[RMDB]
RNA sequence: GGGAACGACUCGAGUAGAGUCGAAAACGCUGGGACCUCCGUAACGCUUCUAUAAUCCACUGAAGCGCGCACGGUGGGUAGAAGCGAGCGGAGGGUCCUGUGCUGAAGCGCGCACGGCAACCGAAAGGUGCGAAACAGAUCUGGUUCGCCAGAUCUGGACGACUUACGAGUUCGCUCGUAAGUCGUCAAAAGAAACAACAACAACAAC
Reactivity to 2A3 in 0.01 (KOAc 150mM, MgCl2 10mM, bicine 150mM(pH8.5), 24C), signal-to-noise 1, nucleotides 027 to 156: c030g030c020u110g000g000g010a010c010c000u000c000c040g030u170a230a060c030g000c010u000u000c010u060a170u070a210a280u160c000c000a010c000u060g060a200a010g040c020g010c020g000c010a050c040g030g030u000g010g000g000u000a000g000a010a000g010c010g040a060g050c000g010g020a050g020g000g000u030c000c000u050g120u100g000c010u090g060a050a020g000c000g000c000g010c080a000c010g070g040c020a110a150c040c010g020a100a070a000g030g020u020g010c030g000a040a080a000c000a000g000a000u000c000u000g130g000u070u060c200g070c110c000a020g000a040u000c000u020g020